[RMDB]
RNA sequence: GGGAACGACUCGAGUAGAGUCGAAAAACCCGGUCGCUCCCUUCCCGCUAAAUCCCCUUCGGGGUCAGUGCGCUACCAGCACAGGGCCGCACGCCUCUCCUGCUAGCCGUGUGGCUCUUAAAGAGCCUCACUCCUGGACGUUCGCGUCCAGGAGUGAAAAAGAAACAACAACAACAAC
Reactivity to DMS in 0.01 (KOAc 150mM, MgCl2 10mM, bicine 150mM(pH8.5), 24C), signal-to-noise 1, nucleotides 027 to 126: a020c000c000c010g000g000u000c030g030c020u000c000c020c070u000u000c020c000c000g070c120u030a020a050a110u020c000c000c010c070u000u010c110g000g010g030g040u030c070a020g000u000g000c060g000c260u030a040c100c100a120g020c090a080c060a080g030g000g090c050c050g090c050a070c060g000c090c030u000c020u000c030c070u030g030c030u010a040g020c120c000g000u050g000u020g000g020c000u000c000u010u000a020a200a110g010a050g000c000c000
Reactivity to 2A3 in 0.01 (KOAc 150mM, MgCl2 10mM, bicine 150mM(pH8.5), 24C), signal-to-noise 1, nucleotides 027 to 126: a040c030c000c000g010g000u000c000g000c050u060c020c000c000u020u000c000c000c010g020c030u110a070a120a110u060c000c000c010c060u090u130c190g000g000g020g000u010c020a040g020u010g020c000g010c020u130a130c030c030a040g040c010a040c020a070g000g030g020c010c010g000c000a000c040g010c010c010u020c040u020c020c040u020g050c070u130a010g000c020c000g040u030g020u020g010g000c000u000c000u000u020a060a150a030g020a000g010c000c010

This 177-nucleotide RNA was probed chemically with DMS and 2A3. Values are in units of 0.01, from 0 to 300, in steps of 10. 2A3 adducts were read by reverse transcription with SuperScript II with manganese.